This 177-nucleotide RNA was probed chemically with DMS and 2A3. Reactivities are given for positions 27 through 126. For 2A3, 1,376 sequencing reads were counted. For DMS the reverse transcriptase was MarathonRT.
[RMDB]
RNA sequence: GGGAACGACUCGAGUAGAGUCGAAAAGAUAUGGAGCCAUAGAGAGCUUGGACCGUGUCGAUCGGAAACGAUCGCACGCUAGCUCGAUUGUGGCUCCUAAGUCAAAAUGGUGUCGUUCGCGACACCAGAACACAGCCGAGUUCGCUCGGCUGUGUUCAAAAGAAACAACAACAACAAC
Reactivity to DMS in 0.01 (KOAc 150mM, MgCl2 10mM, bicine 150mM(pH8.5), 24C), signal-to-noise 1, nucleotides 027 to 126: g000a000u000a300u000g010g000a030g000c000c000a020u000a000g000a300g000a010g010c000u000u010g020g000a120c300c000g050u000g060u000c080g000a000u020c000g000g030a100a140a120c030g020a000u000c000g000c010a000c000g000c000u000a010g000c000u020c020g030a200u000u000g050u010g000g040c000u020c010c000u000a000a150g000u030c010a030a010a090a260u000g000g010u000g040u000c000g030u020u050c190g000c050g000a000c000a000c000c000a030
Reactivity to 2A3 in 0.01 (KOAc 150mM, MgCl2 10mM, bicine 150mM(pH8.5), 24C), signal-to-noise 1, nucleotides 027 to 126: g000a000u040a040u290g000g000a020g010c050c010a010u050a010g160a010g070a000g000c050u090u120g130g200a290c160c190g000u010g110u300c120g010a040u000c030g000g020a000a070a100c000g030a000u000c000g000c010a000c030g020c010u000a000g000c010u050c020g020a050u090u130g000u000g000g000c000u010c000c000u000a000a060g000u000c000a070a040a000a250u140g000g000u000g000u010c070g060u120u110c300g000c000g170a000c000a000c000c010a010